RNA sequence: GGGAACGACUCGAGUAGAGUCGAAAAGGACGAUGCGGUCCAAGGUAAACGUCUUCGCGCUCGGCAAGUCCGCGAUGUCGCUCUGCGGGGACGAGAUCGACUCGAUGUUGUCGAGGGCGUCGAACAGAUCGUAUACUACGUUCGCGUAGUAUACGAUAAAAGAAACAACAACAACAAC
Reactivity to DMS in 0.01 (KOAc 150mM, MgCl2 10mM, bicine 150mM(pH8.5), 24C), signal-to-noise 7, nucleotides 027 to 126: g000g000a020c020g010a130u040g030c150g020g000u000c010c000a130a110g010g020u050a040a090a100c100g000u000c000u000u000c000g020c020g010c010u000c000g010g000c000a020a060g010u010c120c300g000c020g000a040u010g010u000c000g000c030u000c020u020g030c130g020g010g000g000a060c010g000a020g010a070u000c000g000a050c070u000c190g010a090u000g000u010u000g000u000c000g000a010g010g000g010c020g000u000c020g000a110a060c110a110g010
Reactivity to 2A3 in 0.01 (KOAc 150mM, MgCl2 10mM, bicine 150mM(pH8.5), 24C), signal-to-noise 9, nucleotides 027 to 126: g020g010a030c050g150a200u300g140c150g130g010u000c010c020a020a020g150g020u210a070a060a030c070g010u000c000u010u010c000g000c020g050c010u000c000g000g000c010a030a020g040u020c030c020g020c020g030a030u070g050u100c000g010c020u000c040u120g110c170g020g030g000g050a090c020g000a000g000a010u020c000g110a150c040u010c070g010a040u080g130u260u020g010u010c000g000a000g010g090g010c010g000u010c010g030a060a020c020a040g110
The data come from the RNA Mapping Database (RMDB), library OK1LIB. An RNA of 177 nucleotides, treated with DMS and 2A3 and read out base by base. Reactivities are given for positions 27 through 126. For 2A3 the reverse transcriptase was SuperScript II with manganese. DMS adducts were read by reverse transcription with MarathonRT.